[RMDB]
RNA sequence: GGGAACGACUCGAGUAGAGUCGAAAAGGGGCUUCGUCUCGUAUCUCCAUGCGUGAAGCACGCCGAUGCCCUGUUGGUAGUCAUGGAGGAGGACAUGUAUUGUUAUAUUGUCGUUAUGGUAGUGGUGCCCUCAUCCCAUAUUCGUAUGGGAUGAGGGAAAAGAAACAACAACAACAAC
Reactivity to 2A3 in 0.01 (KOAc 150mM, MgCl2 10mM, bicine 150mM(pH8.5), 24C), signal-to-noise 3, nucleotides 027 to 126: g050g020g030g010c040u090u050c010g080u060c070u000c150g060u040a100u060c010u000c020c000a000u020g030c000g000u100g100a050a010g050c010a070c080g030c000c010g010a050u200g030c000c000c000u030g010u010u060g020g070u010a120g070u080c020a010u030g000g000a000g020g000a070g020g000a000c020a010u040g180u210a070u070u260g110u200u100a170u030a030u080u160g060u050c010g040u090u070a100u180g090g000u060a060g100u040g090g130u080g040
Reactivity to DMS in 0.01 (KOAc 150mM, MgCl2 10mM, bicine 150mM(pH8.5), 24C), signal-to-noise 2, nucleotides 027 to 126: g030g020g010g030c030u000u010c010g000u040c080u040c020g020u010a040u010c020u000c010c060a020u000g020c040g000u040g000a040a010g040c040a030c020g000c020c010g000a190u030g000c000c000c000u000g000u040u030g030g000u000a120g000u020c040a000u010g000g000a030g000g020a110g000g000a040c000a030u000g000u020a080u040u030g000u010u040a050u010a050u020u010g020u000c030g000u020u000a050u010g010g030u000a010g000u020g020g000u080g000